[RMDB]
Chemical mapping of a 177-nucleotide RNA with 2A3 and DMS. The RNA was probed in 150 mM KOAc, 10 mM MgCl2 and 150 mM bicine (pH 8.5) at 24 C. For 2A3, 517 sequencing reads were counted. The DMS profile rests on 1,792 reads. For 2A3 the reverse transcriptase was SuperScript II with manganese.
RNA sequence: GGGAACGACUCGAGUAGAGUCGAAAAUAUGGCGAAUGCGCACGAAUUGCUGGUGGCGGUUGUCCGGCUAUGUCAUGCGGCAUCGGCGCGAUCUGCUGUUGGGAUUCGGGGCGGCGCUGGCCGGCACUAAGGGUUCCUCAUUCGUGAGGAACCCUUAAAAAGAAACAACAACAACAAC
Reactivity to 2A3 in 0.01 (KOAc 150mM, MgCl2 10mM, bicine 150mM(pH8.5), 24C), signal-to-noise 1, nucleotides 027 to 126: u260a160u080g050g020c080g090a300a050u160g070c000g090c000a000c130g070a130a090u100u220g100c070u120g000g000u120g010g000c000g060g000u040u040g040u100c000c010g030g000c030u040a010u050g020u030c040a090u160g110c140g100g000c020a040u000c020g080g000c090g000c000g050a050u010c020u140g000c010u000g040u000u090g050g030g000a070u040u000c040g000g010g090g000c030g020g000c000g000c060u000g030g000c000c000g010g010c010a040c060
Reactivity to DMS in 0.01 (KOAc 150mM, MgCl2 10mM, bicine 150mM(pH8.5), 24C), signal-to-noise 1, nucleotides 027 to 126: u020a040u050g000g000c040g000a140a120u000g000c010g020c040a110c030g010a100a030u020u000g000c000u000g000g020u000g000g010c000g010g040u000u000g070u050c000c020g000g010c070u010a000u010g010u000c050a160u020g010c110g000g000c000a030u000c010g000g000c140g030c140g040a080u030c070u030g000c050u010g000u010u020g010g000g000a020u000u020c130g000g000g010g000c110g010g000c030g010c100u000g010g010c000c000g020g000c060a150c160